The record gives the reactivity of an RNA of 207 nucleotides to 2A3. For 2A3 the reverse transcriptase was SuperScript II with manganese. For 2A3, 533 sequencing reads were counted. The reactions ran in a buffer of 150 mM KOAc, 10 mM MgCl2 and 150 mM bicine (pH 8.5), at 24 C.

[RMDB]
RNA sequence: GGGAACGACUCGAGUAGAGUCGAAAAGGACUCCGGAAUUCCUUGCAUGCUGGGGACGAAGCCGCCCCCGGGCGCUCCCCUCGAUCCACCUUCGAGGGGGUUCACACCUCCAGUCGGCGGGCCGGCUGUUCUUCUUUCCCUUCUCUCGUCUUCUUCGGACUAUGAGUAACUUCGGUUACUCAUAGUCAAAAGAAACAACAACAACAAC
Reactivity to 2A3 in 0.01 (KOAc 150mM, MgCl2 10mM, bicine 150mM(pH8.5), 24C), signal-to-noise 1, nucleotides 027 to 156: g000g000a000c020u000c020c020g010g100a060a300u300u090c020c010u120u260g020c000a060u050g030c010u000g010g010g030g010a030c050g110a040a020g090c270c000g010c040c030c050c060c110g060g000g000c000g010c020u050c010c010c000c010u000c010g010a020u050c090c080a080c080c110u040u000c000g000a000g000g000g000g000g000u080u080c000a040c030a040c050c000u010c010c010a030g040u060c000g080g050c020g000g000g000c010c040g040g010c140u060g020u000u000c000u030u030c020u050u030u010c000c000c000u120u070c050u020c040u050c050g060u000c060u030u080c000u040u030c060g010